[RMDB]
RNA sequence: GGGAACGACUCGAGUAGAGUCGAAAAAGAAUAAUUCAUUUAAGAUGGCACACUUCAAGCGUGAAAGAUCGCUGACAAAAGUGCCCGCACCCUGUUUCGAGCCAAAAAAGCAGGAGGGCGAAAGUAGUCAUGACACUUGAUUCGUCAAGUGUCAUGAAAAAGAAACAACAACAACAAC
Reactivity to DMS in 0.01 (KOAc 150mM, MgCl2 10mM, bicine 150mM(pH8.5), 24C), signal-to-noise 6, nucleotides 027 to 126: a120g020a120a090u050a070a100u030u040c050a110u030u030u030a050a030g010a070u020g010g030c010a010c030a090c110u000u010c240a050a000g010c000g010u000g000a110a130a170g000a100u040c000g010c000u000g010a130c300a010a000a170a170g020u000g020c010c000c010g010c040a040c000c000c000u000g000u000u010u000c080g010a180g010c170c230a010a040a090a110a030a010g000c010a000g000g010a070g000g010g030c010g010a050a080a090g010u040a090g010
Reactivity to 2A3 in 0.01 (KOAc 150mM, MgCl2 10mM, bicine 150mM(pH8.5), 24C), signal-to-noise 3, nucleotides 027 to 126: a000g120a040a020u180a080a080u210u150c050a100u110u210u170a050a060g020a050u050g030g000c000a000c010a010c010u080u110c090a050a010g020c000g030u010g040a030a000a000g110a050u280c000g000c000u000g000a010c080a000a060a000a040g010u020g010c000c010c000g000c000a000c000c000c020u020g010u030u000u030c070g020a030g110c040c040a010a290a030a000a000a000g040c010a000g030g030a050g010g020g000c000g000a060a000a000g030u070a040g050
The record gives the reactivity of an RNA of 177 nucleotides to DMS and 2A3. DMS adducts were read by reverse transcription with MarathonRT. Source: RMDB libraries RFM100 and RFMREP, as collected in RNAgym.